[RMDB]
RNA sequence: GGGAACGACUCGAGUAGAGUCGAAAAGCAUGGCGGUGGUAUCGCUGGUGCUAUUAAUGCGGCUUCAAAAGGGGCUGUCCAAAAAGAGUCAGAUGAGUAUAUUCUGGCUAAAGGGCCGUUACAAGUAGAAUAUACGUAUCUUCGGAUACGUAUAUUCAAAAGAAACAACAACAACAAC
Reactivity to DMS in 0.01 (KOAc 150mM, MgCl2 10mM, bicine 150mM(pH8.5), 24C), signal-to-noise 6, nucleotides 027 to 126: g000c010a020u000g010g020c010g020g020u000g020g010u010a070u000c020g020c020u000g040g070u000g020c010u000a110u010u010a070a080u010g000c030g000g000c010u000u000c070a050a100a130a140g010g010g000g020c080u010g000u000c020c030a060a060a070a150a100g000a030g020u000c000a010g000a010u000g010a180g020u000a150u010a070u010u000c010u000g000g000c000u000a020a070a110g000g010g010c040c030g000u000u000a080c090a060a090g010u010a100
Reactivity to 2A3 in 0.01 (KOAc 150mM, MgCl2 10mM, bicine 150mM(pH8.5), 24C), signal-to-noise 5, nucleotides 027 to 126: g000c020a010u040g000g010c020g030g050u130g100g210u190a050u120c010g010c020u050g060g020u010g000c020u040a080u100u190a080a060u120g020c010g010g010c020u100u090c130a090a090a080a080g030g000g010g040c060u060g050u040c010c010a030a030a020a000a040g090a000g020u000c010a000g000a030u030g020a030g210u060a040u010a030u230u010c010u000g000g010c000u000a000a030a020g000g000g000c010c020g010u010u040a040c020a050a030g050u040a030
Chemical mapping of a 177-nucleotide RNA with DMS and 2A3. The data come from the RNA Mapping Database (RMDB), library 15KREP. 2A3 adducts were read by reverse transcription with SuperScript II with manganese. For 2A3, 7,883 sequencing reads were counted. The reactions ran in a buffer of 150 mM KOAc, 10 mM MgCl2 and 150 mM bicine (pH 8.5), at 24 C. DMS adducts were read by reverse transcription with MarathonRT.